[RMDB]
RNA sequence: GGGAACGACUCGAGUAGAGUCGAAAAUAGGUGGUAAUGCGUGGUUGGUAUGGAACAGUGCCAUAUUGGCGGUGUUGUCAAGUGGUUUUCGAUAGCAACACACCAUCUCAUAAGCACUUACUGCGCAUCAUUAGGCCGCAUUCGUGCGGCCUAAUGAAAAAGAAACAACAACAACAAC
Reactivity to DMS in 0.01 (KOAc 150mM, MgCl2 10mM, bicine 150mM(pH8.5), 24C), signal-to-noise 2, nucleotides 027 to 126: u060a080g040g030u000g000g030u030a030a120u010g020c010g020u000g010g000u030u010g070g070u010a100u000g000g030a150a040c300a060g010u100g000c000c050a010u010a170u010u000g000g000c010g060g050u030g000u030u000g080u000c060a030a110g150u020g000g000u000u000u000u000c080g030a040u010a300g000c030a030a000c020a020c080a110c030c010a030u000c030u000c030a030u030a160a080g000c020a010c000u000u030a030c150u000g000c010g030c000a120
Reactivity to 2A3 in 0.01 (KOAc 150mM, MgCl2 10mM, bicine 150mM(pH8.5), 24C), signal-to-noise 2, nucleotides 027 to 126: u300a030g070g000u020g000g090u060a000a000u050g010c060g100u050g000g030u000u030g030g010u000a070u010g030g050a100a010c050a170g070u000g050c000c000a060u170a230u070u090g040g000c130g020g060u140g050u190u150g060u040c000a120a000g000u010g010g090u070u030u000u300c060g070a010u000a110g070c050a000a030c070a000c000a000c000c000a020u000c070u000c020a100u130a000a080g050c040a020c090u040u030a020c100u050g030c000g020c020a100
The record gives the reactivity of an RNA of 177 nucleotides to DMS and 2A3. Conditions: 150 mM KOAc, 10 mM MgCl2 and 150 mM bicine (pH 8.5), 24 C. For DMS the reverse transcriptase was MarathonRT. For 2A3 the reverse transcriptase was SuperScript II with manganese.